[RMDB]
RNA sequence: GGGAACGACUCGAGUAGAGUCGAAAAUUGCGCCUCCGAUUCGCCCUCGGCAUUUCCCCAGCAGCCAUGACCUACCAGGCUGCGGUGCGGCUCGCCGCACAGGUCAUCCCUCAUCGGGCGCGUCCUGGAUAGGGCUAUACUUUCGAGUAUAGCCCAACACGCAUACUAGAUUCGUCUAGUAUGCGUGAAAAGAAACAACAACAACAAC
Reactivity to 2A3 in 0.01 (KOAc 150mM, MgCl2 10mM, bicine 150mM(pH8.5), 24C), signal-to-noise 1, nucleotides 027 to 156: u110u070g000c030g000c040c000u030c000c030g050a090u070u020c030g010c000c000c000u020c060g040g000c020a050u070u020u020c000c020c000c020a060g010c000a000g000c010c000a160u130g010a060c000c020u090a160c090c070a040g010g000c020u000g000c000g000g010u020g000c000g000g010c080u110c190g120c030c000g000c000a030c000a010g000g070u010c070a080u070c020c010c010u050c060a130u060c070g000g010g020c000g000c000g050u040c010c030u020g020g030a090u130a250g030g000g000c010u020a000u000a000c000u030u080u140c170g060a040g010u000a000u000a000g010c000c000c010a000a000
Reactivity to DMS in 0.01 (KOAc 150mM, MgCl2 10mM, bicine 150mM(pH8.5), 24C), signal-to-noise 1, nucleotides 027 to 156: u000u000g020c040g040c040c000u000c030c020g040a120u000u010c030g020c110c010c020u000c060g050g010c010a150u000u010u000c010c000c020c050a110g040c040a040g000c000c010a170u010g010a140c010c050u010a210c100c080a230g000g020c040u000g020c000g060g010u000g020c010g030g000c070u010c250g010c010c000g030c030a020c020a020g000g010u000c020a130u000c010c010c010u020c090a120u000c060g000g000g020c000g000c020g020u000c020c020u020g000g000a140u000a110g030g050g010c010u000a000u000a000c000u000u010u000c250g000a070g020u010a020u000a020g040c010c000c000a020a020